[RMDB]
RNA sequence: GGGAACGACUCGAGUAGAGUCGAAAAAUGAAUUAAUGACACACACUAAUAUGAAGUUUGAAACGGUUAUAAGGUGCCAAUUACUUUAUUGUAGUGAAUUUAUACAAGUUGAAACCAAAGCCACUAACCCAUUAGGUAUUGAUAUUCAAUGUCAUGGUAACUGUUCAAUGUUCGCAUUGAACAGUUAAAAAGAAACAACAACAACAAC
Reactivity to 2A3 in 0.01 (KOAc 150mM, MgCl2 10mM, bicine 150mM(pH8.5), 24C), signal-to-noise 4, nucleotides 027 to 156: a000u040g050a010a040u150u090a050a060u170g060a010c020a010c010a000c000a000c110u060a030a060u080a060u110g060a060a010g030u060u070u120g150a140a100a020c130g010g020u120u060a130u060a230a090g030g000u060g040c000c000a030a060u110u020a020c000u020u080u140a060u110u180g020u010a030g020u010g040a060a020u010u130u100a090u100a090c050a100a040g020u020u050g100a090a020a000c020c000a000a080a070g020c030c010a030c020u030a060a100c000c000c020a030u070u090a020g050g000u030a050u050u030g050a040u100a120u150u080c020a030a040u050g030u010c030a030u060g030g050
Reactivity to DMS in 0.01 (KOAc 150mM, MgCl2 10mM, bicine 150mM(pH8.5), 24C), signal-to-noise 3, nucleotides 027 to 156: a060u010g000a100a090u010u000a050a080u010g010a090c040a120c090a120c040a130c050u000a050a120u000a050u000g000a090a070g010u000u000u000g010a080a130a120c070g000g040u020u000a100u000a100a160g020g020u000g050c020c050a090a120u000u000a050c030u000u000u010a050u030u000g030u000a040g020u000g010a090a060u000u000u010a050u010a100c090a050a120g010u000u000g010a110a080a060c030c010a030a080a300g000c020c020a030c040u000a040a090c010c000c020a090u030u000a090g010g010u010a090u010u000g020a050u000a090u000u000c050a040a060u010g030u000c030a060u000g010g010
Source information
Source: RMDB library OK3TST, as collected in RNAgym. This 207-nucleotide RNA was probed chemically with 2A3 and DMS. For 2A3 the reverse transcriptase was SuperScript II with manganese. As a SHAPE reagent, 2A3 marks flexible, mostly unpaired nucleotides at the ribose 2'-OH.